[RMDB]
RNA sequence: GGGAACGACUCGAGUAGAGUCGAAAAGAUAUGGAUGCAUCUGUCAGAGACGGGCGUUCGUUUGACGUGAUUCGGAAACGAAUCACCGAGAACGUUCCGUCGACGAAGACAGAUGCAUCCUAAGUCGCCAAAACAUGGACUUCGGUCCAUGUUUUGGAAAAGAAACAACAACAACAAC
Reactivity to DMS in 0.01 (KOAc 150mM, MgCl2 10mM, bicine 150mM(pH8.5), 24C), signal-to-noise 1, nucleotides 027 to 126: g020a010u010a300u010g010g020a050u000g010c000a000u000c020u010g000u000c000a080g020a140g000a000c000g040g000g020c020g000u010u000c030g020u000u000u000g010a300c300g030u010g000a020u000u010c000g000g000a120a130a170c020g020a000a000u000c000a010c000c020g000a060g000a020a000c010g020u000u000c000c040g000u020c000g010a050c240g060a110a060g000a020c000a000g000a000u020g010c040a000u010c000c000u000a010a090g010u000c030g010
The data come from the RNA Mapping Database (RMDB), library TTRINS. This 177-nucleotide RNA was probed chemically with DMS. DMS adducts were read by reverse transcription with MarathonRT. The RNA was probed in 150 mM KOAc, 10 mM MgCl2 and 150 mM bicine (pH 8.5) at 24 C.